[RMDB]
RNA sequence: GGGAACGACUCGAGUAGAGUCGAAAAUCCACUUCGUGGCUAUACUGAAUAAUGCUAUGGUGAAAGUGGCUAUGCACAUAUCUGUUUGAGGUCUUGUUUGUAAUUCAGUUCGUUUUUAUAUAUACUCCAUUAGCCCAACGUUCGCGUUGGGCUAAUGAAAAGAAACAACAACAACAAC
Reactivity to DMS in 0.01 (KOAc 150mM, MgCl2 10mM, bicine 150mM(pH8.5), 24C), signal-to-noise 2, nucleotides 027 to 126: u000c000c000a150c070u000u000c040g030u000g010g020c040u000a210u010a110c090u000g010a070a070u000a110a080u000g000c040u000a050u000g000g000u000g010a080a110a090g010u010g000g010c110u000a050u000g000c050a050c060a080u000a070u000c030u000g010u000u000u010g020a060g000g000u000c040u000u000g000u000u000u000g010u000a090a080u020u000c020a030g010u000u000c060g000u000u000u030u000u010a050u000a070u000a100u030a130c040u010c080
The record gives the reactivity of an RNA of 177 nucleotides to DMS. The data come from the RNA Mapping Database (RMDB), library OK2TST. The RNA was probed in 150 mM KOAc, 10 mM MgCl2 and 150 mM bicine (pH 8.5) at 24 C.